The data come from the RNA Mapping Database (RMDB), library OK1LIB.
The record gives the reactivity of an RNA of 177 nucleotides to 2A3 and DMS.
The DMS profile rests on 2,399 reads.
The 2A3 profile rests on 2,994 reads.
[RMDB]
RNA sequence: GGGAACGACUCGAGUAGAGUCGAAAAGUACGCAUAUCGACGAGCCGCUCAUGGUCGAGAUGGCGGACAUCAAGAAGAAGUCCAAUCCGCACGAAAUCCUGCUGGUCGCGGAUAGCCUGACCGGUCAAUGGAUACGAGUGUUCGCACUCGUAUCCAUAAAAGAAACAACAACAACAAC
Reactivity to 2A3 in 0.01 (KOAc 150mM, MgCl2 10mM, bicine 150mM(pH8.5), 24C), signal-to-noise 4, nucleotides 027 to 126: g060u080a060c040g000c070a020u100a030u160c040g020a010c020g020a070g080c010c030g030c030u090c060a100u130g030g010u030c000g010a030g010a060u120g060g010c030g000g010a020c030a050u180c060a060a100g120a100a020g040a050a000g140u040c000c000a030a030u010c020c000g000c000a020c070g070a110a020a000u070c010c010u020g070c060u070g010g040u080c080g000c000g010g020a060u010a000g000c000c010u040g000a040c000c000g000g050u040c010a050
Reactivity to DMS in 0.01 (KOAc 150mM, MgCl2 10mM, bicine 150mM(pH8.5), 24C), signal-to-noise 2, nucleotides 027 to 126: g000u040a000c050g000c040a020u020a120u020c050g000a130c010g000a170g010c050c000g000c040u000c060a090u000g000g000u030c050g010a090g000a060u000g020g020c050g020g000a000c030a060u000c080a060a130g010a190a090g000a110a050g010u000c000c020a190a000u030c000c010g000c000a100c100g000a070a100a040u010c010c000u000g010c050u010g000g000u020c140g000c000g000g000a010u050a150g000c010c000u030g010a210c120c070g010g010u000c110a060
The reactions ran in a buffer of 150 mM KOAc, 10 mM MgCl2 and 150 mM bicine (pH 8.5), at 24 C.